[RMDB]
RNA sequence: GGGAACGACUCGAGUAGAGUCGAAAACUCAUGUGCUUGAAGAUCCUUGUAAGGUACAACACUAGGGGUAAUACUUAUAGCACUGCUUGGCUUUGUGCUCUAGGAAAGGUUUUACCUUUUCAUAGAUGGCACACUAUGGUUCAAACAUGCACACCUAAUCACCUCAGGAGUUCGCUCCUGAGGUGAUAAAAGAAACAACAACAACAAC
Reactivity to 2A3 in 0.01 (KOAc 150mM, MgCl2 10mM, bicine 150mM(pH8.5), 24C), signal-to-noise 1, nucleotides 027 to 156: c030u030c040a050u050g030u010g020c020u030u030g000a070a000g000a130u020c010c010u050u100g070u060a130a040g070g080u170a130c070a110a050c030a040c110u130a050g000g040g000g010u060a050a060u050a270c010u000u080a030u050a110g050c030a070c130u070g020c020u030u040g030g010c010u000u110u200g010u000g000c000u000c000u010a020g030g000a000a000a000g050g000u110u040u050u240a070c000c000u000u000u000u000c010a070u020a000g030a030u090g130g000c010a000c000a010c040u030a050u090g000g000u040u000c010a040a030a120c000a080u150g000c020a040c020a000c080c010u010a060
This 207-nucleotide RNA was probed chemically with 2A3. 2A3 adducts were read by reverse transcription with SuperScript II with manganese. The RNA was probed in 150 mM KOAc, 10 mM MgCl2 and 150 mM bicine (pH 8.5) at 24 C. The data come from the RNA Mapping Database (RMDB), library OK3TST. Reactivities are given for positions 27 through 156.